[RMDB]
RNA sequence: GGGAACGACUCGAGUAGAGUCGAAAAUGUGAGUGCGCUCACGUGAUCAUAUGAGGUACCAUGGUACACGAUCGAUCGCGCGCGCGUACCGAUCGCUGAUCGCACACGACGUACUGAUCGUACCACGGUAGAUCAGGGUCUUCGGACCCUGAUCUACAAAAGAAACAACAACAACAAC
Reactivity to DMS in 0.01 (KOAc 150mM, MgCl2 10mM, bicine 150mM(pH8.5), 24C), signal-to-noise 2, nucleotides 027 to 126: u030g010u000g000a120g020u000g020c100g030c010u000c030a020c000g030u000g010a070u000c010a050u000a100u000g010a140g020g010u000a010c010c020a180u000g020g000u000a050c040a110c060g010a020u000c220g010a040u000c080g010c020g010c060g030c200g000c000g020u000a040c090c060g000a100u000c040g010c180u020g000a000u000c030g000c050a040c070a130c030g010a100c030g000u000a030c030u000g010a070u010c070g080u010a030c000c000a120c160g000
Reactivity to 2A3 in 0.01 (KOAc 150mM, MgCl2 10mM, bicine 150mM(pH8.5), 24C), signal-to-noise 2, nucleotides 027 to 126: u140g040u000g010a020g000u040g000c060g010c040u010c010a010c010g000u040g040a020u020c050a020u130a150u270g270a280g120g030u000a020c040c050a140u190g110g000u020a010c080a030c050g020a050u000c090g000a020u010c040g000c000g020c020g010c040g000c000g010u000a030c050c020g010a020u040c160g050c300u180g000a010u000c010g000c030a010c010a010c060g070a010c010g010u000a030c000u080g010a060u010c000g000u000a030c000c000a050c040g050
Conditions: 150 mM KOAc, 10 mM MgCl2 and 150 mM bicine (pH 8.5), 24 C. An RNA of 177 nucleotides, treated with DMS and 2A3 and read out base by base. Values cover nucleotides 27 to 126. Values are in units of 0.01, from 0 to 300, in steps of 10.